[RMDB]
RNA sequence: GGGAACGACUCGAGUAGAGUCGAAAAGAAAGAAAGAAAUGAGUUUUCUGCGACUGACGGAUUAUUGCAGAGCACUGCAAGGGAACAGAAAAACUCUUUUUCAGCCGACCGUCUGGGCACACCUGAAACGAUUCCUUAAGUUCGCUUAAGGAAUCGUAAAAGAAACAACAACAACAAC
Reactivity to 2A3 in 0.01 (KOAc 150mM, MgCl2 10mM, bicine 150mM(pH8.5), 24C), signal-to-noise 5, nucleotides 027 to 126: g070a010a060a000g090a030a090a000g080a020a060a050u200g010a020g020u000u020u000u000c000u000g010c000g080a050c050u070g020a030c080g100g040a080u100u140a050u090u150g010c010a020g030a070g140c100a070c270u010g000c010a020a030g000g010g040a050a000c000a000g030a020a020a010a030a050c000u020c000u050u040u000u000u030c030a020g000c000c000g010a020c000c010g020u010c030u040g010g020g020c010a020c020a020c030c020u070g040a130a090
Reactivity to DMS in 0.01 (KOAc 150mM, MgCl2 10mM, bicine 150mM(pH8.5), 24C), signal-to-noise 4, nucleotides 027 to 126: g020a060a120a060g000a090a130a100g000a020a040a010u040g010a020g020u000u000u020u000c000u000g010c100g000a220c050u000g000a070c110g020g000a140u020u030a120u010u000g000c000a010g000a290g020c250a070c020u000g000c000a010a060g010g010g000a190a120c010a010g000a000a010a010a020a030c010u000c010u000u000u000u000u000c040a050g000c040c020g010a050c020c010g020u000c020u010g000g000g010c020a080c080a090c060c010u000g000a060a110